[RMDB]
RNA sequence: GGGAACGACUCGAGUAGAGUCGAAAAGCCUCUCCCAUACUGGGACGGCAGACAGCAUGAGCUCAGCCACCAGGAAAAGCAGUGGUCCCACAGCACUGGUCCCCAGGUUCUGAGGUGUGCCCAGUCUCCACGGCUGCUCAGGUGAGGAUGAGAUGGAAGAGUAUCCUUAGUUCGCUAAGGAUACUCUAAAAGAAACAACAACAACAAC
Reactivity to DMS in 0.01 (KOAc 150mM, MgCl2 10mM, bicine 150mM(pH8.5), 24C), signal-to-noise 1, nucleotides 027 to 156: g000c020c000u000c060u010c010c010c010a130u020a030c050u010g000g000g000a070c090g030g030c060a050g000a090c060a160g090c030a140u010g000a120g000c000u010c030a110g050c000c000a090c000c010a130g000g000a070a050a080a100g020c020a050g030u000g000g030u000c020c010c070a170c110a150g090c070a050c020u010g010g000u020c000c040c030c020a180g020g030u000u000c030u000g010a100g020g020u000g000u010g000c000c000c030a080g020u000c030u000c030c030a120c070g000g020c020u000g000c030u010c030a070g020g030u010g000a090g000g030a150u000g000a060g000a090u000g030g010a260
Reactivity to 2A3 in 0.01 (KOAc 150mM, MgCl2 10mM, bicine 150mM(pH8.5), 24C), signal-to-noise 3, nucleotides 027 to 156: g000c020c000u000c020u000c030c000c010a060u150a220c070u080g000g000g140a150c020g000g030c010a010g060a040c020a000g020c040a110u140g080a100g060c010u040c040a040g000c040c010a010c000c050a020g070g000a050a180a060a040g040c040a010g020u050g070g070u100c020c040c000a120c030a030g040c020a010c010u010g010g090u140c030c030c010c020a010g030g090u060u030c010u030g060a080g070g100u050g010u080g030c010c010c010a030g020u010c000u000c040c040a090c040g040g000c010u040g000c020u030c040a020g050g010u040g030a100g070g000a090u170g020a040g030a060u160g050g050a100